[RMDB]
RNA sequence: GGGAACGACUCGAGUAGAGUCGAAAAGAACCGAGAACGGUAAGACGCGCUAUGGCAAAAGCCGCAAUAGAUCAUACGCCGCAAGUGGCAAGACGGAGAGCGCGCAAAGCGGUAUGGAAGAGAAGAACCUAUAGCACGUAUUCGUACGUGCUAUAGGAAAAGAAACAACAACAACAAC
Reactivity to 2A3 in 0.01 (KOAc 150mM, MgCl2 10mM, bicine 150mM(pH8.5), 24C), signal-to-noise 5, nucleotides 027 to 126: g050a020a010c020c010g030a040g030a180a080c070g030g020u110a070a010g090a040c020g040c000g000c050u040a070u200g040g020c060a030a030a090a030g010c000c000g000c030a060a090u100a130g070a040u060c020a020u060a130c070g020c020c000g030c060a100a030g010u070g070g010c020a010a000g050a030c060g050g020a070g010a000g040c010g000c000g000c040a000a080a000g010c010g000g000u060a070u060g070g040a060a030g040a020g030a130a010g050a020a020
Reactivity to DMS in 0.01 (KOAc 150mM, MgCl2 10mM, bicine 150mM(pH8.5), 24C), signal-to-noise 6, nucleotides 027 to 126: g010a150a140c030c010g010a130g030a090a090c120g040g020u010a050a080g010a140c020g010c030g000c010u010a080u030g020g020c090a070a060a130a100g010c000c010g000c090a080a080u010a080g020a060u020c060a050u010a070c160g010c020c030g000c150a090a110g010u040g010g000c030a100a080g000a090c090g010g010a130g010a050g010c020g000c040g000c070a040a050a090g000c020g010g020u000a040u020g000g030a040a070g000a090g000a100a080g030a110a120